Overview:
An RNA of 177 nucleotides, treated with DMS and read out base by base. Source: RMDB library TTRINS, as collected in RNAgym.

RNA sequence: GGGAACGACUCGAGUAGAGUCGAAAAGAUAUGGACCCGCACCUCGACAUGGCUCGUGGGAGAGGCGAUCGGAAACGAUCGCUCCCCACCUCCCAACGAGCCAACAGCGAGGUGCGGGUCCUAAGUCCGAAAAGAUAUGGUUCGCCAUAUCUUUUCGAAAAGAAACAACAACAACAAC
Reactivity to DMS in 0.01 (KOAc 150mM, MgCl2 10mM, bicine 150mM(pH8.5), 24C), signal-to-noise 1, nucleotides 027 to 126: g000a030u000a190u000g040g000a040c000c010c000g040c000a050c000c010u000c000g000a070c160a210u010g020g000c000u000c030g060u010g000g010g050a020g000a120g000g000c000g010a030u020c010g020g000a050a080a180c020g020a000u000c000g040c000u000c080c020c000c000a300c170c000u000c000c000c000a040a060c000g010a050g000c010c000a030a020c240a110g000c020g000a000g030g050u050g050c000g040g000g010u000c000c000u000a000a070g000u010c030